[RMDB]
RNA sequence: GGGAACGACUCGAGUAGAGUCGAAAAGGGUUACCCUUCGGGGUAACCCAUACCUCCUGGCGGUGCGGCGCCGGCCCCGCCGGGAAGGCCGCCAUUACCUCCUAAAGGAAUCAUUCGUGAUUCCUAAUCUUCCCUCAUUAUUCGUAAUGAGGGAAGAAAAAGAAACAACAACAACAAC
Reactivity to DMS in 0.01 (KOAc 150mM, MgCl2 10mM, bicine 150mM(pH8.5), 24C), signal-to-noise 3, nucleotides 027 to 126: g000g000g000u020u000a010c000c000c000u000u010c160g020g010g010g000u000a000a010c000c000c000a020u010a020c080c020u000c020c020u000g000g010c030g010g010u000g010c080g010g010c050g010c070c060g000g000c010c050c090c070g010c060c030g010g010g000a050a040g000g010c050c040g010c050c080a050u000u010a130c080c040u000c030c010u000a080a140a020g020g010a020a010u000c010a020u000u000c250g010u010g000a030u000u000c000c000u000a040a060
Reactivity to 2A3 in 0.01 (KOAc 150mM, MgCl2 10mM, bicine 150mM(pH8.5), 24C), signal-to-noise 2, nucleotides 027 to 126: g020g010g000u060u050a000c010c000c070u040u070c260g020g000g010g000u000a000a010c000c010c000a000u000a010c000c000u020c000c010u010g000g020c000g010g010u090g090c030g040g040c030g040c070c000g020g010c030c030c020c050g040c000c020g000g010g000a000a010g040g010c050c020g080c030c000a030u050u170a090c010c020u070c030c030u160a240a120a030g010g010a010a000u010c010a020u040u100c170g100u020g010a010u000u010c000c010u010a000a010

This 177-nucleotide RNA was probed chemically with DMS and 2A3.